Source: RMDB library OK1LIB, as collected in RNAgym. Structure probing data (2A3 and DMS) for a 177-nucleotide construct. 2A3 adducts were read by reverse transcription with SuperScript II with manganese. The reactions ran in a buffer of 150 mM KOAc, 10 mM MgCl2 and 150 mM bicine (pH 8.5), at 24 C. The DMS profile rests on 1,214 reads.
[RMDB]
RNA sequence: GGGAACGACUCGAGUAGAGUCGAAAAGAAGAGAAGUGAGUAAACGCCUAUACGGUAUAAGCACAGCCCGUCAAAAGGCGUGCGGCGAGGGCACCUGAAGCUGUGCUUAUAACUGGGCCCUCGAAGAGGUCCUAGGGAGGUUCGCCUCCCUAGGACCAAAAGAAACAACAACAACAAC
Reactivity to 2A3 in 0.01 (KOAc 150mM, MgCl2 10mM, bicine 150mM(pH8.5), 24C), signal-to-noise 2, nucleotides 027 to 126: g150a010a000g050a010g040a140a000g050u070g050a000g000u170a140a120a000c020g000c000c010u030a040u060a280c020g000g000u020a100u020a050a000g010c000a000c000a000g000c000c000c000g160u060c020a000a180a000a000g000g000c000g010u010g020c000g010g000c040g000a010g080g060g000c200a280c240c030u090g080a010a010g000c000u020g000u000g080c000u000u080a140u100a100a020c010u020g010g000g000c000c000c000u030c000g030a050a030g000a020
Reactivity to DMS in 0.01 (KOAc 150mM, MgCl2 10mM, bicine 150mM(pH8.5), 24C), signal-to-noise 1, nucleotides 027 to 126: g030a080a250g000a090g000a100a060g010u030g000a250g000u010a030a090a050c000g000c040c020u000a160u000a040c050g010g000u030a000u040a030a040g010c000a000c000a000g010c000c050c010g000u060c190a060a170a260a070g010g000c020g030u000g000c160g020g000c000g080a020g030g000g040c000a110c000c000u030g000a070a080g000c000u000g020u000g000c000u050u090a100u010a100a130c210u000g000g000g000c040c010c040u000c000g000a120a040g060a130